[RMDB]
RNA sequence: GGGAACGACUCGAGUAGAGUCGAAAAGGGUCGGAGGCGGGAUUAUCGCCAUUGUGCCUGACGAGUUAUGUAUUGCGGUUUGGUCACCGGAAUUAGAUCAUGCCGGGAACUCUCUGGCCGGAACGGCAUCGUUCAUAUUAUUCGUAAUAUGAACGAUAAAAGAAACAACAACAACAAC
Reactivity to 2A3 in 0.01 (KOAc 150mM, MgCl2 10mM, bicine 150mM(pH8.5), 24C), signal-to-noise 9, nucleotides 027 to 126: g060g020g050u180c060g050g080a070g040g110c190g030g010g020a050u140u130a130u210c050g000c000c000a030u040u120g080u170g010c000c000u020g010a040c120g000a010g010u060u050a130u190g220u090a200u130u270g180c010g000g000u020u040u040g010g000u020c020a030c080c070g090g130a130a160u190u100a110g000a020u030c000a010u030g000c000c000g040g030g000a010a010c000u010c000u000c020u040g000g000c000c010g030g040a080a040c060g010g000c010
Reactivity to DMS in 0.01 (KOAc 150mM, MgCl2 10mM, bicine 150mM(pH8.5), 24C), signal-to-noise 9, nucleotides 027 to 126: g010g010g010u010c070g010g010a130g010g010c070g010g000g010a300u010u010a050u000c070g010c010c010a130u000u000g010u010g010c000c010u000g010a040c170g010a040g010u000u000a070u010g020u010a140u010u010g010c020g010g000u000u000u000g010g010u000c040a120c190c120g000g010a070a100u010u010a100g010a040u000c040a040u000g000c010c010g000g000g000a030a040c030u000c030u000c020u000g000g010c010c020g000g010a060a090c120g010g010c060